RNA sequence: GGGAACGACUCGAGUAGAGUCGAAAAGAUAUGGAUGAUAUUUCGAGAUGCAAGGCCGAGUCGGAAACGAUAUCCUUGACCCAUCUGUAUCAUCCUAAGUCAAAAGAUGGGCGUUCGCGCCCAUCAACAUCCUAGGGGACUUCGGUCCCCUAGGAUGAAAAGAAACAACAACAACAAC
Reactivity to 2A3 in 0.01 (KOAc 150mM, MgCl2 10mM, bicine 150mM(pH8.5), 24C), signal-to-noise 1, nucleotides 027 to 126: g010a000u050a010u100g010g000a000u010g010a000u000a050u060u280u300c190g010a050g000a070u300g020c000a000a000g020g090c060c070g030a150g110u000c010g010g000a000a000a050c000g020a060u010a040u060c010c000u020u090g090a230c150c040c040a040u020c030u040g040u000a010u010c010a000u000c010c000u000a030a000g000u000c050a060a050a180a000g000a000u010g000g000g030c060g050u030u080c300g000c010g010c060c110c000a000u020c000a000a000
Reactivity to DMS in 0.01 (KOAc 150mM, MgCl2 10mM, bicine 150mM(pH8.5), 24C), signal-to-noise 2, nucleotides 027 to 126: g010a010u000a140u000g000g010a020u000g000a030u000a030u000u020u010c190g000a020g010a070u000g020c030a020a010g010g000c300c040g000a090g040u010c000g020g000a060a030a100c000g020a020u000a090u010c010c030u000u000g000a170c190c300c090a040u000c000u000g000u000a030u000c000a000u000c000c000u000a010a100g000u000c030a120a020a120a140g010a010u010g000g000g030c000g000u000u000c160g030c000g000c010c000c000a000u000c000a050a140